[RMDB]
RNA sequence: GGGAACGACUCGAGUAGAGUCGAAAAAGGGAAAUCCCAAGAAGGUCGAGAAGUCUCAAGCUACGAGGGGGGACCCCCGAGACGCUGGAGACGCCCGGGAACAAGGAAAUAGAACAAGGUACGGUAGAUAGUGUAGUGUUCGCACUACACAAAAGAAACAACAACAACAAC
Reactivity to DMS in 0.01 (KOAc 150mM, MgCl2 10mM, bicine 150mM(pH8.5), 24C), signal-to-noise 8, nucleotides 027 to 129: a060g020g000g000a070a070a120u000c020c010c010a130a070g020a030a040g000g000u020c040g000a070g020a090a050g000u020c020u000c040a010a010g010c040u010a230c050g000a120g010g000g000g000g000g000a070c050c030c010c010c000g010a090g000a080c200g030c010u020g000g000a000g000a040c030g030c010c030c040g000g000g010a060a030c050a030a010g000g000a030a070a060u040a060g030a040a040c100a050a050g030g000u000a050c100g000g000u050a080g000a110u060a080
Reactivity to 2A3 in 0.01 (KOAc 150mM, MgCl2 10mM, bicine 150mM(pH8.5), 24C), signal-to-noise 9, nucleotides 027 to 129: a010g090g000g020a030a100a030u030c000c000c010a000a010g020a010a000g010g020u040c040g020a030g030a250a040g030u010c010u000c050a010a000g000c000u060a050c050g020a070g000g010g000g000g060g140a110c010c000c000c000c010g000a020g000a030c050g000c020u030g020g000a010g000a010c010g010c010c010c000g000g000g010a030a010c010a020a010g020g020a040a070a020u140a050g040a040a010c050a060a040g070g020u100a040c050g030g030u050a040g040a200u120a070

This 170-nucleotide RNA was probed chemically with DMS and 2A3. The reactions ran in a buffer of 150 mM KOAc, 10 mM MgCl2 and 150 mM bicine (pH 8.5), at 24 C.